[RMDB]
RNA sequence: GGGAACGACUCGAGUAGAGUCGAAAAGUGUUAGCGUUCGCGCUAACACAAAGAACGCUGCAACGCGCAGCGCGCUCGGGAGAGCACGAAAGAGCGUUAUAAAAAGCUCGGGCUUCGGCCCGAGCAACGAUACAUUGCAGUUCGCUGCAAUGUAUCGAAAAGAAACAACAACAACAAC
Reactivity to DMS in 0.01 (KOAc 150mM, MgCl2 10mM, bicine 150mM(pH8.5), 24C), signal-to-noise 2, nucleotides 027 to 126: g000u000g000u000u000a020g020c000g040u000u000c250g010c010g020c000u000a010a010c000a000c000a020a080a100g030a080a180c040g000c020u000g000c010a070a050c070g020c060g000c010a010g020c000g010c060g010c000u010c010g000g030g000a220g010a020g010c010a070c070g000a030a040a050g010a110g020c000g020u000u010a150u010a090a110a120a160a140g000c000u000c000g010g000g000c000u000u030c220g040g030c010c000c000g000a010g010c000a020a010
Reactivity to 2A3 in 0.01 (KOAc 150mM, MgCl2 10mM, bicine 150mM(pH8.5), 24C), signal-to-noise 2, nucleotides 027 to 126: g000u000g000u010u010a010g000c030g010u040u030c290g020c010g000c100u000a000a010c000a010c000a010a020a010g030a080a020c020g020c010u010g000c030a190a060c120g080c020g000c120a000g020c020g020c030g000c000u000c010g030g090g010a160g000a010g050c030a020c120g080a090a010a020g070a010g000c020g000u100u040a180u150a170a220a060a060a020g000c020u000c000g020g010g000c040u070u040c260g110g000c000c000c000g000a000g000c000a000a000